[RMDB]
RNA sequence: GGGAACGACUCGAGUAGAGUCGAAAACAAGAAGGAGGAGAUUUCCCGAAAGCUGGAGACUCGCGGAAUUUCAUUCAAGAAGAAGGUAACGGAGAAAGGAGCGGGCCUCCCGAUCCGAGUGGUCCACGAAGGUGUGUGUUCGCACACACCAAAAGAAACAACAACAACAAC
Reactivity to 2A3 in 0.01 (KOAc 150mM, MgCl2 10mM, bicine 150mM(pH8.5), 24C), signal-to-noise 7, nucleotides 027 to 129: c060a000a030g090a030a020g030g020a010g020g010a040g020a030u070u040u020c000c010c000g010a060a040a020g020c060u030g020g010a030g010a050c010u010c070g040c030g050g010a020a010u060u120u100c040a060u090u050c040a060a060g030a060a010g010a000a000g110g010u060a050a040c060g030g000a020g040a040a050a010g030g010a010g020c060g000g060g000c040c010u030c000c000c000g010a000u000c010c010g010a020g030u060g000g040u000c000c000a020c080g050a110a030
Reactivity to DMS in 0.01 (KOAc 150mM, MgCl2 10mM, bicine 150mM(pH8.5), 24C), signal-to-noise 6, nucleotides 027 to 129: c110a090a080g020a030a020g020g010a070g000g000a040g020a040u030u010u020c030c020c030g030a000a100a080g000c090u050g060g010a090g010a090c000u000c040g040c150g040g000a070a030u040u050u010c090a100u010u050c100a130a100g040a040a050g030a050a030g030g030u000a060a140c170g000g040a020g000a050a080a070g030g000a090g040c150g000g000g060c000c000u000c010c010c020g030a090u030c070c010g030a060g030u000g000g000u050c040c040a050c060g040a110a070